[RMDB]
RNA sequence: GGGAACGACUCGAGUAGAGUCGAAAACAGUCAGUGCCGCUGCCUCUGGGUCAGCCCAGGCUUGGCUCCUUGGCUGCUACUGAUGUGCUGCCAGCUAGGAAUAUUAAAAACCAUUCAUUGAACGCACGCGUGUCUUGCAGUUCGCUGCAAGACACGCAAAAGAAACAACAACAACAAC
Reactivity to 2A3 in 0.01 (KOAc 150mM, MgCl2 10mM, bicine 150mM(pH8.5), 24C), signal-to-noise 1, nucleotides 027 to 126: c020a010g060u070c000a010g020u010g090c130c020g000c030u070g020c000c050u020c030u040g040g030g000u130c020a020g040c000c000c000a020g070g070c060u120u140g020g000c020u000c020c030u030u120g010g010c000u000g050c010u060a050c060u040g050a010u080g070u040g000c000u020g020c020c020a030g060c010u030a040g080g030a100a060u100a100u190u300a130a080a040a020a000c040c010a040u060u060c050a050u100u200g090a090a010c010g000c050a000c060